Chemical mapping of a 177-nucleotide RNA with 2A3 and DMS. The RNA was probed in 150 mM KOAc, 10 mM MgCl2 and 150 mM bicine (pH 8.5) at 24 C. It was measured as part of the RMDB libraries RFM100 and RFMREP.
RNA sequence: GGGAACGACUCGAGUAGAGUCGAAAAGGACCUGGCACAGCAGUGGCGCAGGGAAAUGAAUGUCCGUUUGACGGCGGAGACUCGUGUCACUACCUUCGGAUGCAGAUCAGAUAUGCCUAAUGAACUGGCCUUUAUUGUACUUCGGUACAAUAAAGGCAAAAGAAACAACAACAACAAC
Reactivity to 2A3 in 0.01 (KOAc 150mM, MgCl2 10mM, bicine 150mM(pH8.5), 24C), signal-to-noise 6, nucleotides 027 to 126: g030g030a040c000c020u010g020g000c010a020c020a090g100c030a040g050u030g100g000c070g010c080a090g010g010g110a070a050a040u230g050a080a040u120g050u010c010c030g010u010u040u110g190a100c080g030g010c000g010g000a040g050a030c000u010c030g020u020g020u030c010a020c050u070a080c010c000u070u050c060g080g020a050u070g030c020a030g020a150u060c020a010g040a100u090a040u140g040c020c020u090a110a090u100g040a040a040c050u070g090
Reactivity to DMS in 0.01 (KOAc 150mM, MgCl2 10mM, bicine 150mM(pH8.5), 24C), signal-to-noise 3, nucleotides 027 to 126: g000g000a100c050c000u030g030g020c030a040c060a160g010c120a050g030u020g000g000c040g000c020a030g030g000g000a060a090a090u010g000a100a090u020g000u010c000c030g000u000u000u010g040a150c180g000g020c050g000g020a060g000a060c000u000c070g000u010g000u000c010a050c030u020a070c070c060u020u010c070g000g000a100u000g000c080a020g000a080u000c060a050g000a070u020a050u010g010c010c010u000a050a130u020g010a060a110c140u000g000